[RMDB]
Source information: An RNA of 177 nucleotides, treated with 2A3 and read out base by base.
RNA sequence: GGGAACGACUCGAGUAGAGUCGAAAAUGAUGUAGAGUUCGAUUGGGGAGAUAAGUAUCUAAUGCGUGUCAUUAGGUCACCUCGGUAUGACUAGGGUGAGAGCUAGGAACCGUAGAGGUGUUCUCAACGCCUUUGAGCGUUUCGACGCUCAAAGGCGAAAAGAAACAACAACAACAAC
Reactivity to 2A3 in 0.01 (KOAc 150mM, MgCl2 10mM, bicine 150mM(pH8.5), 24C), signal-to-noise 1, nucleotides 027 to 126: u100g130a000u020g090u190a040g000a010g230u030u040c160g020a190u040u100g010g000g000g010a090g000a060u030a060a220g120u120a020u130c000u010a000a010u030g000c070g040u060g150u200c030a030u000u010a020g030g000u040c030a020c000c000u030c050g000g000u180a140u070g040a030c030u020a020g050g000g000u030g040a070g000a000g070c000u000a030g000g010a050a090c020c000g000u010a000g010a010g020g000u030g000u010u060c020u000c030a000a010
Source: RMDB libraries RFM100 and RFMREP, as collected in RNAgym.